[RMDB]
RNA sequence: GGGAACGACUCGAGUAGAGUCGAAAAGACGAGCAGGCGGAUAAUCUUGUGCAGUAUGCAUGCUCGUAACUCCAGCGCACAAGUGGACGCACAAGAUUUAAAUCCAGCAUAGCGCAGGAGCCGCAGACCCGUAAUUAGGGUUCGCCCUAAUUACGGGAAAAGAAACAACAACAACAAC
Reactivity to 2A3 in 0.01 (KOAc 150mM, MgCl2 10mM, bicine 150mM(pH8.5), 24C), signal-to-noise 5, nucleotides 027 to 126: g070a000c010g010a000g000c020a030g030g040c010g030g000a040u100a160a010u120c000u010u020g000u000g010c070a090g060u130a030u100g030c020a000u020g000c000u000c010g000u000a010a020c000u020c000c000a010g000c020g010c010a020c020a140a190g140u090g110g030a030c020g000c000a000c010a020a000g010a000u000u030u100a150a160a010u010c000c000a000g040c100a150u110a100g000c010g000c030a050g020g000a000g010c010c010g070c010a040g060a090
Reactivity to DMS in 0.01 (KOAc 150mM, MgCl2 10mM, bicine 150mM(pH8.5), 24C), signal-to-noise 3, nucleotides 027 to 126: g000a040c000g000a010g000c000a020g030g010c030g020g000a060u030a040a060u010c010u000u030g010u020g000c000a170g010u010a070u010g020c000a060u000g010c010u000c000g050u000a030a110c010u000c020c010a060g020c000g000c010a100c300a090a140g020u030g020g020a050c120g000c020a010c020a020a030g020a060u010u010u080a020a080a090u000c010c000a070g000c090a070u010a040g010c000g010c000a050g020g000a010g010c020c020g000c230a100g000a300